[RMDB]
RNA sequence: GGGAACGACUCGAGUAGAGUCGAAAAGAUAUGGACACGUAACAUGCUGCCUCGACGAAGAAAAGAAGUAUCGGAAACGAUACUUCUUUUCAGAGAGGCAGAACUACAUGGAUAAGUGUCCUAAGUCGUAGUAGGUGAAGUUCGCUUCACCUACUACAAAAGAAACAACAACAACAAC
Reactivity to DMS in 0.01 (KOAc 150mM, MgCl2 10mM, bicine 150mM(pH8.5), 24C), signal-to-noise 3, nucleotides 027 to 126: g000a040u000a300u000g010g020a000c000a000c010g000u010a180a300c010a010u000g010c000u010g000c000c000u010c000g040a300c300g040a090a100g000a010a000a000a000g000a010a040g010u000a000u000c020g010g000a080a030a160c010g000a040u000a000c000u000u000c000u000u000u000u000c000a090g000a150g020a030g000g010c000a020g010a010a020c030u030a300c000a010u000g010g010a110u030a110a180g010u000g000u000c000c000u000a030a140g000u010c050